[RMDB]
RNA sequence: GGGAACGACUCGAGUAGAGUCGAAAAUGCAACAGUAGACAUUGAAGUAUUCACCGGCGACAUUAUCGAAGAAGCGGAAGUUAACGAGGAGCUAACCGGCAAACGCGAUUUUGGCGGCAGCACAACACCAAAAGACAUUCGCGAUCUGUGGGCUACACGGUUAUCAUUACUUCGGUAAUGAUAACCGAAAAGAAACAACAACAACAAC
Reactivity to 2A3 in 0.01 (KOAc 150mM, MgCl2 10mM, bicine 150mM(pH8.5), 24C), signal-to-noise 3, nucleotides 027 to 156: u120g000c050a030a020c020a100g040u080a020g070a070c040a060u050u090g080a120a020g060u060a110u080u100c060a030c090c000g020g000c020g030a010c020a060u110u160a100u210c060g040a100a040g040a080a010g050c000g000g050a040a010g020u050u060a080a040c070g010a080g020g010a010g000c020u030a050a060c010c000g020g020c040a050a040a040c060g030c040g130a080u030u040u010u060g040g030c010g020g000c000a020g030c020a020c020a130a060c030a030c040c000a040a080a050a010g060a040c000a050u090u110c060g000c010g070a060u040c030u010g030u050g030g000g000c000u070a010c050a010
Reactivity to DMS in 0.01 (KOAc 150mM, MgCl2 10mM, bicine 150mM(pH8.5), 24C), signal-to-noise 1, nucleotides 027 to 156: u030g010c030a060a110c050a090g030u010a080g020a070c030a170u000u020g000a080a190g010u010a080u000u010c070a130c010c040g060g010c030g050a130c050a060u000u000a060u000c050g020a060a050g030a060a160g010c000g000g000a120a190g010u010u010a030a130c050g010a140g040g000a130g020c070u060a090a090c010c010g000g040c080a010a050a090c060g010c040g010a140u000u000u000u000g010g000c030g030g000c050a070g010c140a040c020a040a030c050a030c010c010a060a020a060a090g040a040c060a250u010u010c040g020c030g010a080u000c030u000g000u000g020g010g000c000u010a050c130a130